Source: RMDB library OK2TRN, as collected in RNAgym. The record gives the reactivity of an RNA of 177 nucleotides to DMS and 2A3. For 2A3, 2,015 sequencing reads were counted. Reactivities are rounded to 0.1 and cut off at 0 and 3. 2A3 adducts were read by reverse transcription with SuperScript II with manganese. The DMS profile rests on 2,796 reads.
[RMDB]
RNA sequence: GGGAACGACUCGAGUAGAGUCGAAAAUUUGCAUGCCCCCAUUCUUCCAACUUGGAGGUUGCACAGCAGGCAAAGCUUGAAGAUAAUGAUUGGCAUGUGAUGCUUUCAAGCUGCUCUAAAAGGAGCCCUACUCAGUCGAAUUCGUUCGACUGAGUAGAAAAGAAACAACAACAACAAC
Reactivity to DMS in 0.01 (KOAc 150mM, MgCl2 10mM, bicine 150mM(pH8.5), 24C), signal-to-noise 3, nucleotides 027 to 126: u000u000u010g000c000a050u010g000c020c000c080c030c030a120u010u000c030u000u010c030c040a090a170c170u010u010g020g010a050g000g000u000u010g000c070a050c140a080g000c070a090g020g010c030a070a050a050g000c010u010u000g000a040a020g000a100u000a120a080u010g020a160u010u000g010g000c030a040u000g020u000g000a040u010g000c040u000u010u020c030a030a030g010c040u010g000c010u010c020u000a080a070a120a180g000g000a030g010c030c300
Reactivity to 2A3 in 0.01 (KOAc 150mM, MgCl2 10mM, bicine 150mM(pH8.5), 24C), signal-to-noise 2, nucleotides 027 to 126: u040u020u080g000c000a000u060g010c040c000c000c040c000a060u110u010c000u070u000c030c020a090a080c140u010u020g020g020a050g050g020u030u020g010c040a020c030a070g020c000a010g000g060c040a070a050a000g000c010u010u030g020a010a000g050a050u090a150a090u200g130a090u110u070g020g000c010a000u010g080u050g090a090u140g050c040u020u090u030c010a000a000g000c050u040g000c000u070c010u030a180a210a000a030g070g010a010g040c000c000